RNA sequence: GGGAACGACUCGAGUAGAGUCGAAAACGCGAUGGAUACGUCCAUCGCGAAUCCGUCCAAGCCGCGGACGUUAAACUGUGGCACGGUUGUGCCUAGGUGCAACCCUGCUCGUAAUGGCGGCACCCCUGCCCAAGCUACCGUCUACGGACGGUAGCAACUCAUGACUACGUUUCGACGUAGUCAUGAGAAAAGAAACAACAACAACAAC
Reactivity to 2A3 in 0.01 (KOAc 150mM, MgCl2 10mM, bicine 150mM(pH8.5), 24C), signal-to-noise 2, nucleotides 027 to 156: c000g010c000g030a000u000g040g000a020u020a080c210g110u040c000c000a000u000c000g000c000g010a000a000u050c010c000g010u000c020c000a090a020g000c000c000g030c000g000g000a010c010g000u000u040a030a080a050c070u110g060u220g060g010c000a000c030g020g000u010u000g000u010g020c000c020u150a240g130g000u020g010c000a000a010c000c020c000u010g010c000u010c030g170u170a100a150u140g030g000c000g000g000c000a090c000c020c000c000u080g040c030c030c010a080a010g010c000u000a000c000c000g000u010c000u010a050c290g100g000a000c000g000g000u000a000g010c000a000a000
The record gives the reactivity of an RNA of 207 nucleotides to 2A3. For 2A3 the reverse transcriptase was SuperScript II with manganese. The RNA was probed in 150 mM KOAc, 10 mM MgCl2 and 150 mM bicine (pH 8.5) at 24 C.